[RMDB]
RNA sequence: GGGAACGACUCGAGUAGAGUCGAAAAGUUCAAUGCCAGGCAGAGACACAACGGGUGUGUAUUCCAGUCUCUUUAUUCCCUUGCUACUGACGAUAAAGGGGAGUUGUGCUAUCUGCAUCAGACCCUGUCGCACUAGGACUUUCGAGUCCUAGUGCGAAAAAGAAACAACAACAACAAC
Reactivity to DMS in 0.01 (KOAc 150mM, MgCl2 10mM, bicine 150mM(pH8.5), 24C), signal-to-noise 1, nucleotides 027 to 126: g020u000u030c030a020a070u020g060c070c100a100g000g040c060a050g000a100g020a150c050a060c080a090a040c100g000g000g070u000g000u010g010u030a050u030u030c030c000a200g000u030c000u000c000u000u050u060a000u000u020c060c050c000u000u010g010c010u000a010c050u000g000a020c020g000a110u000a010a060a020g000g000g030g000a080g000u010u000g000u000g000c020u000a160u010c070u000g050c050a020u060c110a070g050a070c030c000c000u000g000
Reactivity to 2A3 in 0.01 (KOAc 150mM, MgCl2 10mM, bicine 150mM(pH8.5), 24C), signal-to-noise 2, nucleotides 027 to 126: g000u090u080c090a040a010u200g020c040c040a000g110g000c070a000g010a000g010a030c010a010c000a000a070c100g000g020g000u050g010u080g060u150a200u050u010c000c010a000g070u020c000u030c000u010u080u090a180u080u040c000c020c000u000u070g020c000u000a140c040u100g140a070c040g020a020u070a140a070a000g030g020g020g000a110g040u090u100g010u020g010c020u020a100u280c030u010g000c020a000u060c000a010g110a130c000c020c050u000g060